[RMDB]
RNA sequence: GGGAACGACUCGAGUAGAGUCGAAAAGCUGCCUCUGACGUCCUUCUCCCCCGGAAACGGGGCCGAAGGGUGGUAAGGCGUGUCGCCUGGCGCUCGCACGGGUAUGCGUGGAGGUCGACCCUGGCCGCAUUAAAUACUGCUUCGGCAGUAUUUAAUGAAAAGAAACAACAACAACAAC
Reactivity to 2A3 in 0.01 (KOAc 150mM, MgCl2 10mM, bicine 150mM(pH8.5), 24C), signal-to-noise 6, nucleotides 027 to 126: g010c010u010g010c000c000u030c090u110g090a030c010g030u010c000c010u010u000c010u050c000c000c000c000c000g000g000a010a030a000c000g000g010g010g000c010c020g010a010a010g010g010g010u040g050g060u110a050a030g080g000c030g010u020g030u020c100g010c020c010u030g030g000c050g030c090u140c140g050c040a130c060g060g000g030u110a040u210g040c030g030u150g030g040a040g020g020u100c090g170a300c000c010c000u020g080g010c030c010g030
Reactivity to DMS in 0.01 (KOAc 150mM, MgCl2 10mM, bicine 150mM(pH8.5), 24C), signal-to-noise 9, nucleotides 027 to 126: g010c030u000g010c010c000u000c040u000g010a150c040g000u000c010c000u000u000c000u000c300c000c000c010c000g010g000a070a070a200c010g020g000g010g030c050c070g010a010a020g010g010g010u000g010g010u010a100a050g010g010c010g010u000g010u000c100g020c010c010u000g000g010c050g020c110u010c090g010c040a070c050g010g000g010u000a040u010g010c020g020u000g010g010a040g010g010u000c060g000a070c040c010c010u000g010g010c050c080g000

Chemical mapping of a 177-nucleotide RNA with 2A3 and DMS. The 2A3 profile rests on 12,893 reads. It was measured as part of the RMDB library OK2TRN. For DMS, 26,893 sequencing reads were counted.